Structure probing data (DMS and 2A3) for a 177-nucleotide construct. Source: RMDB library OK2TRN, as collected in RNAgym. The RNA was probed in 150 mM KOAc, 10 mM MgCl2 and 150 mM bicine (pH 8.5) at 24 C. For 2A3 the reverse transcriptase was SuperScript II with manganese. Values cover nucleotides 27 to 126. DMS adducts were read by reverse transcription with MarathonRT. The 2A3 profile rests on 1,427 reads.

RNA sequence: GGGAACGACUCGAGUAGAGUCGAAAAGAGGUUAUUGGAAAGAGGCGAAACGUGAUACGCUACAAGGACUUCCGCACUAACGUUGGAGCUUUCAUAGAGGUCCAGCAUGUACUCGGCAAACGUGCACCAGGACGGAGAUAUUCGUAUCUCCGUCCUGAAAAGAAACAACAACAACAAC
Reactivity to DMS in 0.01 (KOAc 150mM, MgCl2 10mM, bicine 150mM(pH8.5), 24C), signal-to-noise 2, nucleotides 027 to 126: g030a070g020g020u000u010a160u000u000g010g000a060a080a150g010a160g020g000c040g000a030a040a080c150g020u010g010a130u000a080c090g030c040u010a070c120a120a120g020g000a050c050u000u000c030c060g000c010a010c060u010a030a080c210g010u000u000g000g000a080g020c030u010u000u000c190a110u000a130g000a040g010g010u000c020c010a040g000c060a050u000g030u000a070c040u010c030g010g000c030a060a080a080c080g000u010g010c070a160c220
Reactivity to 2A3 in 0.01 (KOAc 150mM, MgCl2 10mM, bicine 150mM(pH8.5), 24C), signal-to-noise 2, nucleotides 027 to 126: g110a010g050g020u120u030a060u130u160g030g080a070a080a110g080a050g030g000c000g030a130a080a010c060g040u050g050a060u030a190c030g000c080u010a050c020a020a030g030g000a000c020u010u000c010c040g080c010a090c040u090a210a070c020g020u000u000g040g020a040g030c070u050u130u100c140a170u140a140g050a000g070g020u000c000c000a010g000c020a030u100g010u050a050c020u010c020g050g000c050a030a080a040c050g070u070g020c000a000c000